[RMDB]
RNA sequence: GGGAACGACUCGAGUAGAGUCGAAAACUCACCACAAUACAAAGAAACAUACAAAAACUGUUCCACUAAUUUCCACUCUUGUUGAUACGCGACAGCGGGUUCUAUUGGCUCAAGCUCAUCCAUGCAAUCCUCCUUCCUAGUUCGCUAGGAAGGAGGAAAAAGAAACAACAACAACAAC
Reactivity to DMS in 0.01 (KOAc 150mM, MgCl2 10mM, bicine 150mM(pH8.5), 24C), signal-to-noise 2, nucleotides 027 to 126: c070u010c080a120c000c010a170c160a090a030u030a120c120a050a010a140g000a100a070a060c170a100u020a040c020a010a010a120a100a210c090u030g030u000u000c020c040a050c030u020a050a110u000u000u000c040c010a020c050u020c070u010u060g000u000u000g000a050u080a040c050g000c020g000a100c180a040g010c020g010g000g000u030u020c020u000a110u000u000g000g000c030u060c040a090a050g010c010u000c050a020u000c000c000a030u000g030c170a120a140